Record summary:
Chemical mapping of a 177-nucleotide RNA with DMS and 2A3. For DMS the reverse transcriptase was MarathonRT. Reactivities are rounded to 0.1 and cut off at 0 and 3. The RNA was probed in 150 mM KOAc, 10 mM MgCl2 and 150 mM bicine (pH 8.5) at 24 C.
[RMDB]
RNA sequence: GGGAACGACUCGAGUAGAGUCGAAAAUAAUAAACUCGACAUCGCCUGAUGUUGAAAAGAUUGAUUCUUUAGAUCCUUUUGGCGUUGAUUCUUUUGUCUGGAACUGUAAGCCGCUUGUUAAUAAAGAACUACCCUCGUAGUUCGCUACGAGGGUAGUAAAAGAAACAACAACAACAAC
Reactivity to DMS in 0.01 (KOAc 150mM, MgCl2 10mM, bicine 150mM(pH8.5), 24C), signal-to-noise 2, nucleotides 027 to 126: u060a110a040u040a030a050a210c100u000c000g000a070c030a010u000c000g010c130c130u080g010a070u000g000u010u030g000a000a060a140a100g000a080u020u030g010a160u010u000c030u000u000u000a070g020a040u010c020c000u000u010u000u010g000g000c200g030u000u000g000a080u000u000c020u000u000u010u000g000u020c090u000g000g010a000a040c040u040g000u010a150a130g000c030c020g000c030u000u040g000u010u020a070a030u050a070a130a040g000a070
Reactivity to 2A3 in 0.01 (KOAc 150mM, MgCl2 10mM, bicine 150mM(pH8.5), 24C), signal-to-noise 2, nucleotides 027 to 126: u170a000a080u120a000a120a030c090u010c000g030a000c000a000u000c000g130c240c230u160g000a020u020g000u000u000g050a010a000a010a010g170a050u040u270g000a080u160u000c000u020u000u100a140g030a160u060c000c000u080u210u000u030g050g000c020g110u040u080g100a300u000u030c000u000u070u120u030g010u000c080u140g000g160a160a110c000u030g110u160a000a120g070c000c000g030c100u120u140g010u000u080a160a160u220a270a110a000g000a010